[RMDB]
RNA sequence: GGGAACGACUCGAGUAGAGUCGAAAACUCGAAAGAGACCUGCAUAUCUUAGGCAGAUGAUCAAGUCACGUCUGAAAAGCGAAAGCCCUAAGAUAUGCAGCUGUGACGACUUGUCGCAGAAAAUAAAACUAUACUAAAUCUUCGGAUUUAGUAUAGUAAAAGAAACAACAACAACAAC
Reactivity to DMS in 0.01 (KOAc 150mM, MgCl2 10mM, bicine 150mM(pH8.5), 24C), signal-to-noise 7, nucleotides 027 to 126: c000u010c010g010a070a110a110g010a030g010a140c250c000u010g000c000a000u000a000u000c000u000u000a000g000g000c020a010g000a020u010g010a130u030c040a040a030g010u010c040a300c020g010u000c000u010g000a130a070a120a120g010c010g000a100a080a120g000c010c000c000u010a020a000g000a010u000a000u000g000c000a000g000c000u000g000u000g000a010c040g010a100c100u010u030g010u000c000g020c000a000g000a080a050a080a070u040a030a080a090
Reactivity to 2A3 in 0.01 (KOAc 150mM, MgCl2 10mM, bicine 150mM(pH8.5), 24C), signal-to-noise 9, nucleotides 027 to 126: c010u000c010g020a020a030a010g070a000g030a050c000c000u000g000c000a000u000a000u000c000u000u000a000g000g000c000a000g000a020u030g020a060u130c060a060a020g070u070c040a010c080g010u000c010u010g070a170a170a090a010g020c030g050a080a020a010g000c000c000c000u000a000a000g000a000u000a000u000g000c000a000g010c000u000g010u010g010a010c060g080a150c060u080u200g000u010c000g000c010a000g060a020a070a020a000u230a020a090a010